An RNA of 207 nucleotides, treated with DMS and 2A3 and read out base by base. For 2A3 the reverse transcriptase was SuperScript II with manganese. The DMS profile rests on 4,218 reads.
RNA sequence: GGGAACGACUCGAGUAGAGUCGAAAAGAGGUAGGCAGUUGUAUGAGUUUUACAAUGAUGUAAAACCACCAGUCCUUGAUGUGGAUGACGUCUUAAUCCAAACAUUAUGAGUAGUACAACUACACCAGCACCAGUUUACAUCUGGACUGCUGAUGAACGAUGUAAAUCCGUUCGCGGAUUUACAUCGAAAAGAAACAACAACAACAAC
Reactivity to DMS in 0.01 (KOAc 150mM, MgCl2 10mM, bicine 150mM(pH8.5), 24C), signal-to-noise 2, nucleotides 027 to 156: g010a050g000g010u000a030g040g040c050a050g020u010u020g020u030a060u010g000a110g020u000u000u020u000a040c010a040a160u000g000a230u020g030u010a030a000a030a060c010c010a060c080c020a150g000u000c040c020u030u000g020a070u000g040u000g010g000a080u020g020a060c050g000u000c040u010u000a030a030u010c030c030a070a110a120c020a030u010u000a080u000g030a160g050u000a060g000u010a100c090a070a110c030u000a140c010a020c030c010a020g030c010a190c010c000a080g020u000u020u000a140c140a110u000c010u020g010g000a040c110u000g000c000u020g000a010u010g030a080a220
Reactivity to 2A3 in 0.01 (KOAc 150mM, MgCl2 10mM, bicine 150mM(pH8.5), 24C), signal-to-noise 4, nucleotides 027 to 156: g080a000g020g020u100a010g020g000c060a020g030u080u060g050u080a080u110g110a100g080u000u030u010u010a050c080a090a140u300g090a120u120g110u040a000a040a000a000c000c000a010c020c010a010g030u020c010c030u050u090g040a060u050g030u020g000g030a010u020g020a030c010g060u030c020u090u080a060a040u010c050c040a080a080a040c050a050u070u110a060u180g050a030g040u020a000g000u030a170c020a120a020c040u050a020c020a030c020c020a000g000c020a020c000c000a000g010u050u140u040a090c060a080u050c010u010g000g040a060c100u020g000c000u010g010a070u080g020a030a030